[RMDB]
RNA sequence: GGGAACGACUCGAGUAGAGUCGAAAACACUUAAACGACAGAUUCGCAUUGCAUGCCGUAAGUGUAAUUUAGCUUUCCGGUUAACCACCUCAAAGCUACGCGCUAAUGAUAAUAUCUUAUCAGUUAGGUAAUUCAAAAUCUUCGGAUUUUGAAUUACAAAAGAAACAACAACAACAAC
Reactivity to 2A3 in 0.01 (KOAc 150mM, MgCl2 10mM, bicine 150mM(pH8.5), 24C), signal-to-noise 2, nucleotides 027 to 126: c000a020c010u040u080a040a170a000c030g060a040c010a040g070a200u150u140c090g040c150a090u060u300g020c050a030u020g000c010c000g020u010a020a030g010u020g000u070a060a110u040u100u050a000g010c000u000u000u000c040c000g000g000u010u020a040a030c020c010a010c020c020u040c040a030a020a010g000c020u020a040c040g080c020g000c040u040a050a050u020g010a000u000a040a030u070a060u040c030u010u020a020u010c000a050g050u040u050a040g040
Reactivity to DMS in 0.01 (KOAc 150mM, MgCl2 10mM, bicine 150mM(pH8.5), 24C), signal-to-noise 2, nucleotides 027 to 126: c020a000c020u010u000a080a080a070c020g020a050c010a040g010a200u020u000c170g020c100a100u010u010g000c070a150u000g000c010c000g050u010a040a030g020u010g000u000a100a070u000u000u000a010g000c000u000u000u000c040c060g000g030u000u000a140a120c290c230a140c010c010u000c130a010a030a040g000c000u000a020c250g010c140g030c070u000a030a030u000g000a030u000a000a020u010a170u000c210u000u000a010u020c000a040g010u000u010a020g010
Notes:
Source: RMDB library 15KREP, as collected in RNAgym. The record gives the reactivity of an RNA of 177 nucleotides to 2A3 and DMS. The 2A3 profile rests on 1,913 reads.